[RMDB]
RNA sequence: GGGAACGACUCGAGUAGAGUCGAAAACAAGGUUCCCGAUAAUGGUUGUGAACCUUCUUCUUGAAGGCCUUCUGGACGGCGGUUCGAUUCCGCCCAGGUCCACCAGAAGCACAUUGCACGGGCAGUGCCACCGUCGGAAUUUCGAUUCCGACGGUGGAAAAGAAACAACAACAACAAC
Reactivity to DMS in 0.01 (KOAc 150mM, MgCl2 10mM, bicine 150mM(pH8.5), 24C), signal-to-noise 2, nucleotides 027 to 126: c200a050a150g010g000u000u020c000c010c000g090a060u050a020a100u040g020g030u010u040g070u040g000a060a300c020c010u000u000c000u010u020c170u000u020g000a040a050g000g000c040c010u010u000c100u000g020g030a110c300g020g000c000g070g000u000u010c300g000a280u070u020c000c020g000c000c040c160a010g010g000u000c060c090a250c060c020a020g000a020a000g000c160a060c130a000u000u000g000c070a070c160g030g020g010c070a060g000u000g010
Reactivity to 2A3 in 0.01 (KOAc 150mM, MgCl2 10mM, bicine 150mM(pH8.5), 24C), signal-to-noise 2, nucleotides 027 to 126: c090a090a040g110g010u100u080c000c000c000g000a070u100a230a110u150g220g020u220u130g010u000g070a100a050c000c000u000u000c010u200u060c000u030u290g010a010a010g030g000c000c000u010u000c020u010g030g100a090c050g000g000c000g000g010u000u080c050g030a040u010u000c000c000g000c000c040c040a050g000g000u100c000c000a000c000c000a010g000a040a000g040c010a000c000a050u000u160g010c010a030c150g030g060g000c000a050g040u000g020
Source: RMDB library RFM100, as collected in RNAgym.
An RNA of 177 nucleotides, treated with DMS and 2A3 and read out base by base.
Values cover nucleotides 27 to 126.
The reactions ran in a buffer of 150 mM KOAc, 10 mM MgCl2 and 150 mM bicine (pH 8.5), at 24 C.